This 207-nucleotide RNA was probed chemically with 2A3. For 2A3, 1,104 sequencing reads were counted. For 2A3 the reverse transcriptase was SuperScript II with manganese. It was measured as part of the RMDB library M2RFPK.
RNA sequence: GGGAACGACUCGAGUAGAGUCGAAAAUAGCGAAGCAGGAUUUUAUGCGUCAAGUGUUCACAGGCUGGGGAGUCGCCGUGAAACGAAAAGCAGAAAGCGUGCUGCUUACGAUAUAAUUUCCGCACCCAUAAGAAGUCUCUGUUCGCAGAGACUUCAAGAACAGAGACCGUUUCGACGGUCUCUGUUCAAAAGAAACAACAACAACAAC
Reactivity to 2A3 in 0.01 (KOAc 150mM, MgCl2 10mM, bicine 150mM(pH8.5), 24C), signal-to-noise 2, nucleotides 027 to 156: u140a020g020c050g080a070a020g010c060a100g030g000a000u020u020u040u020a070u050g000c030g010u020c080a090a110g040u080g040u180u000c000a000c040a090g010g010c020u110g020g010g070g010a070g090u100c010g010c010c000g010u010g000a030a010a000c040g020a000a020a020a060g020c030a000g020a090a110a010g140c080g100u100g040c040u010g000c000u000u000a040c010g020a010u010a000u010a090a060u000u000u000c020c010g040c070a090c010c020c000a050u040a170a090g000a050a000g000u000c000u000c000u000g040u050u090c170g000c060a000g000a000g000a000c000u000u000c010a000a000